This 177-nucleotide RNA was probed chemically with DMS and 2A3.
[RMDB]
RNA sequence: GGGAACGACUCGAGUAGAGUCGAAAAAGCUGCUCUAAAUCGGCGGAAAGGACCCCGCUAUCGGGAGUGGCUAGCAGCGAGGGUUGCCGCUCCAGCCGCGCUAUGAAGCAGUCAUAGCAGAUUUACACGUAAUCCAUGCUUUCGAGCAUGGAUUACGAAAAGAAACAACAACAACAAC
Reactivity to DMS in 0.01 (KOAc 150mM, MgCl2 10mM, bicine 150mM(pH8.5), 24C), signal-to-noise 2, nucleotides 027 to 126: a090g000c020u000g020c020u030c130u000a050a110a070u000c110g010g000c000g000g010a070a130a190g000g010a200c060c040c000c000g010c030u000a030u000c090g040g000g020a080g010u010g000g010c030u000a040g020c140a050g010c060g010a080g010g000g010u000u020g000c030c030g030c060u000c010c030a120g000c030c030g030c220g000c030u000a020u000g030a080a140g000c080a100g020u010c020a010u000a050g070c000a110g000a060u000u000u000a050c210a150
Reactivity to 2A3 in 0.01 (KOAc 150mM, MgCl2 10mM, bicine 150mM(pH8.5), 24C), signal-to-noise 1, nucleotides 027 to 126: a000g020c010u000g000c010u000c040u140a040a130a140u140c070g000g020c010g050g020a030a130a000g100g040a040c000c000c010c030g000c000u040a060u120c070g090g030g000a050g050u130g050g000c000u020a040g100c040a010g010c020g030a170g040g030g090u090u100g050c000c000g000c070u010c000c020a050g020c000c060g100c040g000c000u000a000u040g020a060a000g120c090a030g150u030c010a000u050a020g000c070a000g030a090u210u230u110a040c110a010
Reactivities are given for positions 27 through 126. The 2A3 profile rests on 877 reads. For DMS, 1,073 sequencing reads were counted. For DMS the reverse transcriptase was MarathonRT.